This 177-nucleotide RNA was probed chemically with DMS and 2A3. DMS adducts were read by reverse transcription with MarathonRT. For DMS, 21,928 sequencing reads were counted.

[RMDB]
RNA sequence: GGGAACGACUCGAGUAGAGUCGAAAAGCUGGUCCGGUUUGGCCCCAGCGAACACUUGACGAACGGUUAGUCCCGUCUUGUGGAUUAGGACGUUCUAGGUCCGGUCUGGCCCCUAGUUCGUCCGAAAACUCGGAUUACUAUUCGUAGUAAUCCGAGUAAAAGAAACAACAACAACAAC
Reactivity to DMS in 0.01 (KOAc 150mM, MgCl2 10mM, bicine 150mM(pH8.5), 24C), signal-to-noise 6, nucleotides 027 to 126: g010c000u000g000g010u020c030c020g000g010u000u030u040g010g000c100c130c010c010a020g000c030g010a140a110c040a030c000u010u010g000a020c010g010a110a110c150g000g020u030u050a140g000u020c100c040c000g000u020c030u000u000g020u010g000g010a160u020u010a110g010g010a000c000g020u000u000c000u000a000g000g000u050c020c000g000g020u030c130u040g000g010c190c150c010c000u000a000g010u000u000c000g000u000c000c000g010a040a030a100
Reactivity to 2A3 in 0.01 (KOAc 150mM, MgCl2 10mM, bicine 150mM(pH8.5), 24C), signal-to-noise 9, nucleotides 027 to 126: g000c000u010g020g020u130c040c070g130g120u110u130u280g130g010c050c080c010c000a000g010c010g020a050a010c000a000c010u010u020g010a010c010g030a220a020c040g070g080u160u150a080g120u300c020c050c000g000u000c010u010u020g010u020g030g050a070u050u150a070g000g000a000c000g000u000u000c000u010a000g000g010u020c040c030g050g150u130c160u160g080g020c050c070c000c000u000a000g000u000u000c000g000u010c000c000g000a020a010a000